This 177-nucleotide RNA was probed chemically with DMS and 2A3. Values cover nucleotides 27 to 126.

RNA sequence: GGGAACGACUCGAGUAGAGUCGAAAAGAAUAACCGACGUUAGGGAAUUCGGCAAGUUAGUCCCGUACGUUCGCAAUAAGGGAUGCCUGCCUCGGAAAGAGGCAGGUCGCAGUGACUCGGACGCUCCGUGGGAAUAGUGUUUCGACACUAUUCCCACAAAAGAAACAACAACAACAAC
Reactivity to DMS in 0.01 (KOAc 150mM, MgCl2 10mM, bicine 150mM(pH8.5), 24C), signal-to-noise 3, nucleotides 027 to 126: g020a280a120u000a070a110c060c070g000a090c190g010u010u020a090g000g000g000a170a060u010u010c020g000g000c080a080a140g010u030u020a050g010u010c000c000c000g000u020a060c100g010u000u020c140g010c100a050a060u030a100a180g000g000g000a040u000g000c000c010u000g010c000c000u010c010g020g020a100a130a120g000a000g010g000c000a000g000g000u000c060g000c140a090g000u020g000a080c030u000c010g020g010a050c050g010c090u000c030c060
Reactivity to 2A3 in 0.01 (KOAc 150mM, MgCl2 10mM, bicine 150mM(pH8.5), 24C), signal-to-noise 4, nucleotides 027 to 126: g030a030a130u210a070a010c030c030g080a070c060g070u070u080a070g050g020g000a030a070u060u050c010g020g050c080a080a060g040u190u170a010g030u060c010c020c000g000u020a020c060g080u070u080c040g000c060a030a120u060a090a050g000g000g010a000u060g000c000c000u000g000c000c000u000c030g020g130a300a150a120g010a050g000g000c000a010g000g000u000c000g000c000a030g010u040g070a020c000u000c010g040g000a020c020g020c040u040c040c070

About this RNA: It was measured as part of the RMDB libraries RFM100 and RFMREP.